[RMDB]
This 177-nucleotide RNA was probed chemically with 2A3 and DMS.
The reactions ran in a buffer of 150 mM KOAc, 10 mM MgCl2 and 150 mM bicine (pH 8.5), at 24 C.
Source: RMDB libraries RFM100 and RFMREP, as collected in RNAgym.
For 2A3 the reverse transcriptase was SuperScript II with manganese.

RNA sequence: GGGAACGACUCGAGUAGAGUCGAAAAAUCCCGGCAAAGGAAAGUGCUGAGAGGCGCGAGUACGAGCCGGGACAUGCCGGAGUCACUGCGUACGUUCUGAAGAACGGGCCAGGGAGUGUACGGCAGGUAGAACACAUAAUUUCGAUUAUGUGUUCUAAAAAGAAACAACAACAACAAC
Reactivity to 2A3 in 0.01 (KOAc 150mM, MgCl2 10mM, bicine 150mM(pH8.5), 24C), signal-to-noise 9, nucleotides 027 to 126: a000u020c010c000c000g000g000c090a170a110a020g010g000a030a000a010g010u010g000c000u030g020a040g020a050g110g000c000g000c000g000a000g000u000a000c000g000a000g000c000c000g000g000g000a000c010a060u040g000c000c000g010g010a110g060u020c010a010c040u010g020c090g040u050a020c000g000u010u010c040u180g300a300a250g000a020a010c000g000g020g000c010c000a010g010g010g010a040g020u080g020u040a020c000g000g000c000a000g030g030
Reactivity to DMS in 0.01 (KOAc 150mM, MgCl2 10mM, bicine 150mM(pH8.5), 24C), signal-to-noise 9, nucleotides 027 to 126: a150u000c000c000c000g010g010c000a020a110a180g000g000a120a130a180g000u000g010c000u000g010a260g000a200g000g000c000g010c000g000a060g010u000a100c010g000a300g000c000c000g000g000g000a010c070a030u000g000c000c000g000g000a190g000u010c000a030c000u000g000c200g020u010a030c000g010u000u000c000u020g050a150a130g000a010a010c000g000g000g000c030c010a010g000g010g010a030g010u020g000u000a190c010g000g000c000a020g000g010